[RMDB]
An RNA of 177 nucleotides, treated with DMS and 2A3 and read out base by base. Reactivities are given for positions 27 through 126. The 2A3 profile rests on 24,020 reads. The RNA was probed in 150 mM KOAc, 10 mM MgCl2 and 150 mM bicine (pH 8.5) at 24 C. For DMS, 25,039 sequencing reads were counted. For DMS the reverse transcriptase was MarathonRT.
RNA sequence: GGGAACGACUCGAGUAGAGUCGAAAAGCUGGCCACGUGUGCAGUGAAGUAACUGCCCAUCCUGGCGUUGAGGUCGGCGGGGUCUAGCCGAGACAAAACAGCGCGGAAGGUCUUCUCACUGGGCCGCCGGCAUAAAUAUGUUCGCAUAUUUAUGCCGAAAAGAAACAACAACAACAAC
Reactivity to DMS in 0.01 (KOAc 150mM, MgCl2 10mM, bicine 150mM(pH8.5), 24C), signal-to-noise 7, nucleotides 027 to 126: g010c040u020g010g000c010c010a080c190g010u000g010u010g010c000a020g010u000g010a110a120g010u050a110a040c040u000g000c020c020c020a120u010c040c090u020g000g010c020g030u010u000g010a160g010g000u000c020g010g010c020g020g020g010g020u040c100u030a110g020c020c010g000a150g010a080c090a060a070a110a190c040a030g020c000g020c030g000g000a100a040g010g000u010c080u010u000c020u010c010a090c030u010g000g010g000c000c020g010c050
Reactivity to 2A3 in 0.01 (KOAc 150mM, MgCl2 10mM, bicine 150mM(pH8.5), 24C), signal-to-noise 9, nucleotides 027 to 126: g080c090u120g010g010c010c000a060c080g070u060g030u040g050c010a020g000u010g090a160a020g060u150a060a040c030u040g010c000c020c000a040u070c000c020u060g110g010c020g000u010u040g040a060g030g110u020c020g010g100c030g020g040g000g050u110c110u130a030g020c000c010g020a020g010a030c040a020a110a040a020c010a010g020c010g000c010g040g020a050a030g000g000u010c000u040u010c010u010c010a020c020u040g010g010g010c000c000g000c010